[RMDB]
RNA sequence: GGGAACGACUCGAGUAGAGUCGAAAAGAACGGUGUAAUCAUACGUAAGUCCGACGUGCCGGAUUGCAGUUUUUCUGCAGAUUCCUGAACAAUCAGGGGAUGGCACUGCCCAGAGAUCUGGGCUCAGGGACUAUUUUAUGUUCGCAUAAAAUAGUCCAAAAGAAACAACAACAACAAC
Reactivity to DMS in 0.01 (KOAc 150mM, MgCl2 10mM, bicine 150mM(pH8.5), 24C), signal-to-noise 9, nucleotides 027 to 126: g000a080a050c010g010g000u000g010u010a100a120u030c090a060u020a070c040g010u000a080a120g010u010c010c010g000a100c070g010u000g000c000c020g000g010a200u020u000g000c000a000g000u000u020u020u020u010c000u010g010c010a020g000a160u020u020c010c000u000g000a050a150c300a110a120u010c010a020g010g000g000g010a230u030g000g010c010a010c010u010g000c000c000c000a000g010a300g010a080u020c010u000g000g000g000c010u010c120a070g010
Reactivity to 2A3 in 0.01 (KOAc 150mM, MgCl2 10mM, bicine 150mM(pH8.5), 24C), signal-to-noise 9, nucleotides 027 to 126: g060a030a010c030g010g010u050g030u190a220a120u270c060a080u160a240c020g030u050a050a050g070u000c020c010g020a050c060g020u000g000c000c010g030g050a090u070u060g000c010a000g040u020u040u060u200u180c000u000g000c000a000g010a150u120u100c000c000u010g020a090a060c080a160a210u100c010a010g000g000g010g030a030u070g030g000c010a000c030u030g000c000c000c000a010g010a010g020a060u100c000u010g000g010g000c010u020c040a070g040